[RMDB]
RNA sequence: GGGAACGACUCGAGUAGAGUCGAAAAUGUACUAUUUGCAAAUUGUGCUCCAAUAGUGUGCAAGUGCAGUGAUCCACCCAUGAAUAUCAACCAGGAGCCUAAGAUGACCAAUGUUAUGGUAUCAUCAACCACGCACUAAUUUCGAUUAGUGCGUGGUAAAAGAAACAACAACAACAAC
Reactivity to 2A3 in 0.01 (KOAc 150mM, MgCl2 10mM, bicine 150mM(pH8.5), 24C), signal-to-noise 3, nucleotides 027 to 126: u070g000u050a030c040u090a150u130u070u090g050c040a030a050a080u080u090g010u090g040c000u010c000c000a100a190u120a160g160u130g040u050g040c000a010a060g020u000g070c000a010g030u010g110a060u020c000c030a040c070c010c000a020u110g050a070a050u220a120u220c040a050a030c060c020a050g020g020a020g030c000c000u020a070a030g000a030u020g020a010c000c010a040a100u140g070u300u120a120u090g100g000u040a090u010c000a010u010c000a010
Reactivity to DMS in 0.01 (KOAc 150mM, MgCl2 10mM, bicine 150mM(pH8.5), 24C), signal-to-noise 2, nucleotides 027 to 126: u000g020u010a020c040u000a120u000u010u000g010c030a070a160a070u000u020g000u020g030c030u020c040c050a140a050u000a080g000u000g040u000g030c020a030a080g000u000g000c040a030g000u010g010a100u010c120c130a080c050c000c000a100u020g010a100a080u000a090u010c140a060a130c130c050a110g000g010a100g010c000c090u020a030a080g030a020u010g000a040c030c000a030a210u000g010u000u000a140u000g000g020u000a110u000c020a010u000c040a110